[RMDB]
RNA sequence: GGGAACGACUCGAGUAGAGUCGAAAAAGCAGAUGCAAAAGGCAGUUGCUCGGCAUCCGCUAACUGGUAACUCAUGCCUUCAUCACCGCAGCGUUGCUUUGCUUGCUCAAGCAUGGCGUGUGAGAUAUAUAUGGUUUUACUUCGGUAAAACCAUAUAAAAAGAAACAACAACAACAAC
Reactivity to 2A3 in 0.01 (KOAc 150mM, MgCl2 10mM, bicine 150mM(pH8.5), 24C), signal-to-noise 6, nucleotides 027 to 126: a010g020c030a020g010a050u040g000c020a000a090a140a160g060g000c030a120g190u300u230g080c030u050c050g060g000c000a010u020c000c010g010c020u020a070a040c060u060g050g020u070a080a040c020u030c090a060u140g020c020c000u100u100c040a140u020c000a020c010c020g000c010a040g110c040g060u040u040g000c000u100u050u050g020c030u100u170g020c050u060c120a010a010g000c000a010u020g020g000c030g030u150g000u010g040a030g060a020u050a000
Reactivity to DMS in 0.01 (KOAc 150mM, MgCl2 10mM, bicine 150mM(pH8.5), 24C), signal-to-noise 9, nucleotides 027 to 126: a040g020c010a030g010a020u000g010c020a080a060a100a130g000g010c010a220g010u010u010g010c020u000c170g000g010c010a020u000c020c050g020c020u000a070a090c150u010g010g010u000a040a080c100u000c090a100u000g000c030c020u000u000c090a130u000c020a030c020c020g010c030a040g000c180g000u000u000g010c010u010u000u000g030c060u010u000g010c170u000c080a030a030g010c010a010u000g000g010c020g010u010g020u000g010a040g010a100u010a120
The record gives the reactivity of an RNA of 177 nucleotides to 2A3 and DMS. The reactions ran in a buffer of 150 mM KOAc, 10 mM MgCl2 and 150 mM bicine (pH 8.5), at 24 C. For 2A3, 9,793 sequencing reads were counted. 2A3 adducts were read by reverse transcription with SuperScript II with manganese. DMS adducts were read by reverse transcription with MarathonRT. High DMS reactivity at an A or C suggests that its Watson-Crick edge is free.